[RMDB]
RNA sequence: GGGAACGACUCGAGUAGAGUCGAAAAGGGGUCACUUCGAUAAGGAUCCCGAGGCAUCGAUCUAUACUGAAGCCUCCACGGUAUAGGGAGCCUUCGGGAUCCUUUUGACGAAGUGACGGAGGCACCCAAAAGCUAAGGUCCUUCGGGACCUUAGCAACCGACAAGUAGUGUUCGCACUACUUGUCGGAAAAGAAACAACAACAACAAC
Reactivity to 2A3 in 0.01 (KOAc 150mM, MgCl2 10mM, bicine 150mM(pH8.5), 24C), signal-to-noise 1, nucleotides 027 to 156: g000g000g070g000u000c000a000c000u000u010c000g270a300u210a300a040g000g000a000u000c000c000c010g000a000g010g000c050a110u300c180g000a010u000c000u000a000u000a000c010u050g030a040a010g020c000c000u010c000c000a000c000g000g000u000a000u000a000g000g000g000a010g040c060c070u190u130c000g000g010g000a000u060c000c020u030u000u000u020g000a000c000g000a000a000g020u000g000a010c020g000g010a000g000g000c000a010c010c000c000a020a100a010a000g000c000u000a000a000g000g000u010c010c080u070u160c300g130g020g000a000c000c000u000u000a000g000c000a000a040
An RNA of 207 nucleotides, treated with 2A3 and read out base by base.
The reactions ran in a buffer of 150 mM KOAc, 10 mM MgCl2 and 150 mM bicine (pH 8.5), at 24 C.
Reactivities are given for positions 27 through 156.
For 2A3 the reverse transcriptase was SuperScript II with manganese.